[RMDB]
RNA sequence: GGGAACGACUCGAGUAGAGUCGAAAAAGAAAGCCAUGCGGUGGGCUCGGUCAAAUUCAAACAACUGUUUGGAUCAUCGGCAUAAUCGACAAAUUCCAGUUGAUGUUUUUGUGACGAUUGCUGAGUAUCAACAACUUCGUUUCGACGAAGUUGUUGAAAAAGAAACAACAACAACAAC
Reactivity to DMS in 0.01 (KOAc 150mM, MgCl2 10mM, bicine 150mM(pH8.5), 24C), signal-to-noise 2, nucleotides 027 to 126: a130g010a090a170a110g000c050c020a030u000g030c110g000g000u000g000g000g010c070u000c070g020g030u000c100a080a110a090u000u000c080a010a020a010c020a300a170c170u000g000u000u000u000g040g010a010u000c140a090u000c010g000g010c030a050u020a100a100u000c000g030a050c020a000a020a040u000u000c050c030a080g060u020u000g010a110u000g000u000u000u000u020u000g010u000g010a140c050g000a070u000u000g000c030u000g010a060g040u000a070
This 177-nucleotide RNA was probed chemically with DMS.